[RMDB]
RNA sequence: GGGAACGACUCGAGUAGAGUCGAAAAAGGGCUUUCCUUCUUCGGUGAGCCCGCCUCUCCUCGUCGGUGAAGUCUCCCGCGCGGGUCCUCUUCCUAGGUCCGGAAUCAACCUCCAUCUGAUCUGUCCGCCACUAUGUAAGUUCGCUUACAUAGUGGCAAAAGAAACAACAACAACAAC
Reactivity to 2A3 in 0.01 (KOAc 150mM, MgCl2 10mM, bicine 150mM(pH8.5), 24C), signal-to-noise 1, nucleotides 027 to 126: a000g020g000g010c020u050u020u020c020c000u090u160c100u140u190c090g000g000u020g020a000g000c030c000c000g010c000c010u000c000u010c020c000u000c030g060u020c080g030g000u080g070a080a050g050u020c020u040c100c000c000g010c020g000c050g080g000g010u030c000c000u000c010u060u010c000c000u000a030g030g010u000c020c020g000g020a030a050u040c020a040a070c000c010u010c070c000a070u050c030u070g020a070u000c040u040g070u010c030c030
Reactivity to DMS in 0.01 (KOAc 150mM, MgCl2 10mM, bicine 150mM(pH8.5), 24C), signal-to-noise 1, nucleotides 027 to 126: a110g030g010g010c030u010u000u000c010c000u020u010c190u020u020c230g010g000u000g000a020g020c020c010c020g020c020c020u020c030u000c030c010u000c030g020u000c060g000g000u010g040a070a120g010u010c050u000c040c010c000g010c090g010c070g000g010g040u010c010c060u010c060u000u000c030c030u000a050g010g010u000c030c020g000g000a130a060u020c100a090a040c080c040u000c060c050a060u000c070u000g020a170u010c040u010g040u010c100c080
Conditions: 150 mM KOAc, 10 mM MgCl2 and 150 mM bicine (pH 8.5), 24 C. The record gives the reactivity of an RNA of 177 nucleotides to 2A3 and DMS. For 2A3 the reverse transcriptase was SuperScript II with manganese. DMS adducts were read by reverse transcription with MarathonRT. Source: RMDB library 15KREP, as collected in RNAgym. The 2A3 profile rests on 1,298 reads.